[RMDB]
RNA sequence: GGGAACGACUCGAGUAGAGUCGAAAAGUAAUAGCUUGAGUUGCAGUAAGAACUUGUUUUAAAUCAAUGUACACUGUUGUGCUUGCAGCAAUUGCUGCAGUUGUAUGCAACGCUGUACCAGCAAGAGCAAUUGUAAAUGUUCCUGCAGAUGUAGCCGAGUCGUAGUACAAUUCGUUGUACUACGACUAAAAGAAACAACAACAACAAC
Reactivity to DMS in 0.01 (KOAc 150mM, MgCl2 10mM, bicine 150mM(pH8.5), 24C), signal-to-noise 2, nucleotides 027 to 156: g040u000a060a070u000a120g030c050u000u000g010a130g030u000u000g030c050a120g000u000a100a090g020a130a080c010u010u000g000u000u010u000u010a020a170a170u010c040a090a130u020g010u000a060c030a060c050u000g020u000u000g020u000g010c070u000u000g020c000a050g030c010a170a110u000u000g030c010u000g040c010a050g020u000u000g000u000a070u000g040c000a010a080c040g050c030u000g010u000a030c000c070a090g020c020a030a060g020a070g010c000a040a130u000u010g010u000a090a100a100u010g010u000u000c030c010u000g030c070a110g010a060u000g050u000a020g030c070c060g000
Reactivity to 2A3 in 0.01 (KOAc 150mM, MgCl2 10mM, bicine 150mM(pH8.5), 24C), signal-to-noise 6, nucleotides 027 to 156: g060u080a010a150u050a160g020c010u040u100g030a060g050u060u050g030c040a030g020u120a130a080g040a050a040c040u050u080g080u110u180u070u190a050a140a080u140c100a070a080u120g010u000a010c010a000c010u030g000u020u010g010u070g030c060u080u110g000c010a000g000c010a080a300u250u280g000c010u010g000c000a030g010u100u130g080u100a090u210g000c000a000a020c020g000c080u010g000u010a030c040c040a010g010c020a050a030g020a010g050c010a060a100u090u060g070u140a060a110a100u110g000u020u040c000c010u000g000c010a030g000a150u090g020u100a030g030c050c050g040